[RMDB]
RNA sequence: GGGAACGACUCGAGUAGAGUCGAAAAGAUAUGGACAGAGCGAUGUGAGGAGGAGAUCGGAAACGAUCUCUCCCCACCCUUAACAUCGCGACGAAGUCCUAAGUCAAAAGCUAGGUUCGCCUAGCAAGUUAUAUUGCUACUUCGGUAGCAAUAUAACAAAAGAAACAACAACAACAAC
Reactivity to DMS in 0.01 (KOAc 150mM, MgCl2 10mM, bicine 150mM(pH8.5), 24C), signal-to-noise 9, nucleotides 027 to 126: g020a030u000a290u010g000g010a030c000a100g010a150g030c010g030a010u000g010u000g000a040g000g010a140g010g010a010g000a010u000c000g010g010a090a050a120c000g010a010u000c010u010c000u010c040c000c010c030a300c080c030c020u000u000a100a040c010a010u000c000g000c010g000a130c210g000a070a120g000u000c000c000u010a020a110g000u000c030a120a070a120a140g010c000u000a000g000g010u000u010c250g020c010c010u000a000g010c000a010a050
Reactivity to 2A3 in 0.01 (KOAc 150mM, MgCl2 10mM, bicine 150mM(pH8.5), 24C), signal-to-noise 4, nucleotides 027 to 126: g010a020u050a030u090g000g010a010c030a020g170a030g080c000g010a010u010g020u020g020a020g000g020a020g040g000a010g000a000u010c010g010g030a040a020a000c000g000a000u000c000u000c000u020c010c000c000c000a040c010c010c000u020u010a070a040c000a000u000c000g010c020g020a110c050g060a160a030g000u000c000c000u010a100a010g030u020c030a020a060a050a080g000c000u000a000g030g000u070u100c260g080c050c000u000a000g000c000a000a000
Overview: Chemical mapping of a 177-nucleotide RNA with DMS and 2A3. For DMS, 13,771 sequencing reads were counted.